[RMDB]
RNA sequence: GGGAACGACUCGAGUAGAGUCGAAAAGUACUAGCGUUCGCGCUAGUACAAAGAAAGAAAGAUAGUCUGAGCGCACAGACUAGCGCAAAAGAAAGUAAGAAAAAAUCCCACUCUUCGGAGUGGGAAACUCUUUUAUUCACUUCGGUGAAUAAAAGAGAAAAGAAACAACAACAACAAC
Reactivity to DMS in 0.01 (KOAc 150mM, MgCl2 10mM, bicine 150mM(pH8.5), 24C), signal-to-noise 1, nucleotides 027 to 126: g010u000a000c000u010a000g020c000g070u010u000c260g010c000g030c040u000a000g000u030a000c000a050a070a060g000a080a170a090g010a130a110a090g010a130u000a010g020u000c000u000g000a140g000c110g050c140a090c040a080g000a050c040u000a000g000c040g000c160a030a010a100a050g000a020a070a170g000u000a050a110g000a000a010a050a110a090a080u000c000c000c000a000c000u010c000u000u060c180g000g000a000g020u000g000g000g000a010a000a020
An RNA of 177 nucleotides, treated with DMS and read out base by base. The RNA was probed in 150 mM KOAc, 10 mM MgCl2 and 150 mM bicine (pH 8.5) at 24 C. The DMS profile rests on 834 reads.